[RMDB]
RNA sequence: GGGAACGACUCGAGUAGAGUCGAAAACGAGAUGUUCGUCGGGGUGGGUGCAUCCCGGGUGCGGGACCUGUUUGAGCAGGCCAAACAGAACAGCCCAUGCAUCAUCUUCGUUGACGAGAUCGACGCGCCGGUGAUACUCAUUCGUGAGUAUCACCGGAAAAGAAACAACAACAACAAC
Reactivity to 2A3 in 0.01 (KOAc 150mM, MgCl2 10mM, bicine 150mM(pH8.5), 24C), signal-to-noise 4, nucleotides 027 to 126: c030g000a020g010a040u090g100u270u060c050g030u040c020g010g000g020g000u070g000g060g100u180g080c010a070u060c030c050c010g000g010g000u100g010c040g030g000g040a090c010c020u040g070u010u050u120g040a060g040c050a040g010g000c000c010a020a040a010c020a000g040a090a050c020a040g020c000c010c000a030u090g000c000a020u030c000a000u020c040u170u060c080g190u090u120g010a020c060g030a010g010a080u040c020g030a050c050g030c030g000
Reactivity to DMS in 0.01 (KOAc 150mM, MgCl2 10mM, bicine 150mM(pH8.5), 24C), signal-to-noise 1, nucleotides 027 to 126: c090g000a070g000a070u030g020u020u010c070g020u020c010g000g000g000g070u070g000g000g000u040g010c010a040u000c080c020c010g020g000g000u030g000c070g010g020g000a060c170c020u000g000u010u000u000g020a080g010c040a050g000g000c030c000a000a090a020c000a010g000a090a080c170a290g000c050c010c060a070u070g000c040a000u030c020a050u010c000u000u000c050g000u070u020g000a150c060g000a070g050a040u020c050g000a030c030g050c250g010